[RMDB]
RNA sequence: GGGAACGACUCGAGUAGAGUCGAAAAGUGACUGAGAAACAGUCGCCACGAUCGACGAUCCACGGGAGACACUAGCAUGGUGCGGGAAGUAAGACGAUAACCGUGAUCUCGUGUAAGUGUUAGGACGACAUUCAUUCAUUUUCGAAUGAAUGAAUGUAAAAGAAACAACAACAACAAC
Reactivity to DMS in 0.01 (KOAc 150mM, MgCl2 10mM, bicine 150mM(pH8.5), 24C), signal-to-noise 2, nucleotides 027 to 126: g010u010g000a000c010u000g010a210g030a160a140a150c030a010g010u000c000g020c020c050a100c170g030a110u020c010g010a070c070g010a060u010c050c010a070c060g000g000g010a110g010a100c040a050c010u010a060g010c020a020u010g000g010u030g010c000g000g000g000a080a140g000u000a080a090g000a300c070g000a300u080a250a300c080c000g000u000g000a280u010c000u000c000g000u000g000u000a050a090g000u010g000u000u010a040g000g010a200c250g000
Reactivity to 2A3 in 0.01 (KOAc 150mM, MgCl2 10mM, bicine 150mM(pH8.5), 24C), signal-to-noise 5, nucleotides 027 to 126: g030u030g010a000c000u000g010a020g170a230a150a020c000a000g010u000c000g000c020c010a090c060g050a090u060c010g040a040c030g020a100u000c010c020a020c040g030g000g000a040g010a010c010a000c010u020a030g010c010a010u040g000g000u050g020c010g000g010g010a060a020g070u170a050a070g170a070c060g000a130u140a230a070c000c000g000u000g060a170u000c050u000c000g000u000g000u050a110a040g010u010g010u030u040a030g020g030a010c020g010